An RNA of 207 nucleotides, treated with 2A3 and read out base by base. The reactions ran in a buffer of 150 mM KOAc, 10 mM MgCl2 and 150 mM bicine (pH 8.5), at 24 C. The data come from the RNA Mapping Database (RMDB), library OK3TST. The 2A3 profile rests on 863 reads.
RNA sequence: GGGAACGACUCGAGUAGAGUCGAAAAAAAGAAUUCAAACGAUGGGUAACAACAGAAGUGUUACCAACAAUCCGCAAACAUGGUGCUUAUCUAACUGAUAGCAAGAUUGAAGAAGUUCUUCUCAGUCCAGAUACAAUCAUUAACUUGGCAACUCAACGCAACUAAUGCGUUUCGACGCAUUAGUUGCAAAAGAAACAACAACAACAAC
Reactivity to 2A3 in 0.01 (KOAc 150mM, MgCl2 10mM, bicine 150mM(pH8.5), 24C), signal-to-noise 2, nucleotides 027 to 156: a000a000a000g160a030a070u140u110c100a110a040a030c060g000a020u120g090g020g000u000a030a020c080a000a000c010a090g130a130a040g080u020g000u000u000a000c000c000a000a000c030a010a000u040c040c030g040c100a030a050a060c010a080u020g060g000u040g000c030u010u050a060u000c000u000a000a060c020u020g030a050u100a040g040c040a010a010g020a030u010u140g020a100a010g050a040a000g080u060u000c000u000u000c010u000c000a000g020u030c020c060a000g030a030u090a010c050a010a050u060c000a040u070u130a100a060c020u000u010g000g050c020a000a030c050u050c050a000a050c080